Record summary:
An RNA of 207 nucleotides, treated with DMS and 2A3 and read out base by base. For DMS, 4,097 sequencing reads were counted. For 2A3, 7,338 sequencing reads were counted. Reactivities are given for positions 27 through 156.

RNA sequence: GGGAACGACUCGAGUAGAGUCGAAAACUUACGGCAGUUCGCUGCCGUAAGAAAGAGUAGUUCAGUGGUAGAACACCACCUUGCCAAGGUGGGGGUCGCGGGUUCGAAUCCCGUCUCGGGCGAAAGCCCAAAAUACACUACGGUUCGCCGUAGUGUAGUGUGUAUCGUAGUUCGCUACGAUACACACAAAAGAAACAACAACAACAAC
Reactivity to DMS in 0.01 (KOAc 150mM, MgCl2 10mM, bicine 150mM(pH8.5), 24C), signal-to-noise 2, nucleotides 027 to 156: c000u010u000a010c010g010g010c020a010g030u000u020c300g040c000u000g000c000c010g000u010a000a000g030a050a060a160g000a110g060u000a060g020u020u000c020a140g020u010g010g000u010a110g000a020a070c010a050c010c010a000c000c000u000u000g030c230c140a120a090g000g040u000g000g000g010g000g040u010c030g010c060g000g000g020u000u000c080g010a300a110u000c010c000c010g010u020c130u000c110g010g020g000c000g000a090a130a180g000c040c010c020a000a010a080a140u000a010c000a010c000u000a000c000g000g000u000u000c270g000c020c000g040u000a000g020u020g020u000a010
Reactivity to 2A3 in 0.01 (KOAc 150mM, MgCl2 10mM, bicine 150mM(pH8.5), 24C), signal-to-noise 6, nucleotides 027 to 156: c000u000u000a000c010g010g030c010a020g010u040u130c130g070c150u010g000c000c010g000u000a000a000g000a030a040a000g020a000g000u020a010g000u010u010c040a020g000u050g190g250u120a010g020a020a010c000a010c000c000a000c000c000u100u270g250c120c150a050a010g000g000u010g000g000g000g010g030u060c010g000c000g000g000g000u000u000c000g000a000a000u000c000c000c000g000u000c010u020c010g010g000g000c020g070a110a010a030g000c000c000c000a020a030a000a000u010a010c000a000c000u000a000c000g020g050u020u050c260g040c110c000g010u010a010g000u000g010u010a050